RNA sequence: GGGAACGACUCGAGUAGAGUCGAAAAGAGUGUGGAGUCUACACCAGUUGAACCUCCAACUGUAGAUGUGGUAGCACUUCAACAGGAAAUGACAAUUGUCAAAUGUAAGGGUUUAAAUAAACCUUUCGGACUCCGUUGUUCGCAACGGAGAAAAGAAACAACAACAACAAC
Reactivity to DMS in 0.01 (KOAc 150mM, MgCl2 10mM, bicine 150mM(pH8.5), 24C), signal-to-noise 6, nucleotides 027 to 129: g000a080g020u020g000u000g070g030a100g020u050c010u020a060c020a080c000c000a060g030u040u060g000a090a130c080c070u050c090c030a040a090c010u000g010u000a060g000a110u040g000u040g000g000u000a010g020c100a000c050u000u000c030a000a000c040a120g020g020a120a090a120u050g000a050c060a240a130u030u070g030u030c030a060a090a100u070g000u000a080a060g010g000g050u000u000u000a060a060a060u000a060a030a020c010c070u000u000u000c050g010g020a260
Reactivity to 2A3 in 0.01 (KOAc 150mM, MgCl2 10mM, bicine 150mM(pH8.5), 24C), signal-to-noise 9, nucleotides 027 to 129: g040a010g030u110g020u040g010g060a020g020u030c010u020a010c010a030c020c000a010g000u000u020g060a130a140c040c050u160c080c000a020a030c010u010g020u050a090g060a280u100g060u060g050g040u010a020g010c020a020c010u060u060c010a040a040c040a030g140g060a030a090a080u130g030a020c040a090a260u160u300g030u050c010a040a030a080u130g070u130a040a080g030g010g000u030u030u060a120a240a050u300a050a020a010c000c000u030u020u010c010g050g010a010